Chemical mapping of a 177-nucleotide RNA with 2A3 and DMS. The RNA was probed in 150 mM KOAc, 10 mM MgCl2 and 150 mM bicine (pH 8.5) at 24 C. High 2A3 reactivity points to a flexible backbone, as in loops and unpaired stretches. Reactivities are given for positions 27 through 126.
RNA sequence: GGGAACGACUCGAGUAGAGUCGAAAAUGUAACGAUCUGGGCACUGUCUCAGCCAUGAGCUCGGUGAAAUUGUAGUAUCGGUGAAGAUGCCGGUUACCCGCUACGGGACGAAAAGACCCCGUGAACCAAGUCUUGUACAGUUCGCUGUACAAGACUUAAAAGAAACAACAACAACAAC
Reactivity to 2A3 in 0.01 (KOAc 150mM, MgCl2 10mM, bicine 150mM(pH8.5), 24C), signal-to-noise 5, nucleotides 027 to 126: u170g040u040a040a070c010g000a060u040c010u030g020g040g010c050a030c140u090g060u060c000u010c050a030g020c040c020a100u110g020a000g020c050u030c020g010g020u060g030a080a120a100u110u070g050u090a080g050u060a050u030c010g020g020u060g050a160a110g050a100u250g030c010c000g000g010u010u050a070c010c010c000g000c040u020a010c000g020g000g000a030c030g110a080a100a020a020g130a070c000c010c030c000g000u030g050a020a010c020c010
Reactivity to DMS in 0.01 (KOAc 150mM, MgCl2 10mM, bicine 150mM(pH8.5), 24C), signal-to-noise 4, nucleotides 027 to 126: u000g020u010a050a070c060g010a080u000c020u000g030g010g000c010a080c070u000g010u020c040u010c080a090g000c080c050a080u010g010a070g010c050u000c020g000g010u030g000a040a090a200u020u010g010u000a060g010u010a050u000c010g020g000u010g000a100a110g000a130u010g000c030c000g040g000u000u020a100c010c000c010g000c150u000a010c020g020g000g000a120c070g000a070a040a080a110g000a170c090c000c000c010g020u000g010a120a120c180c130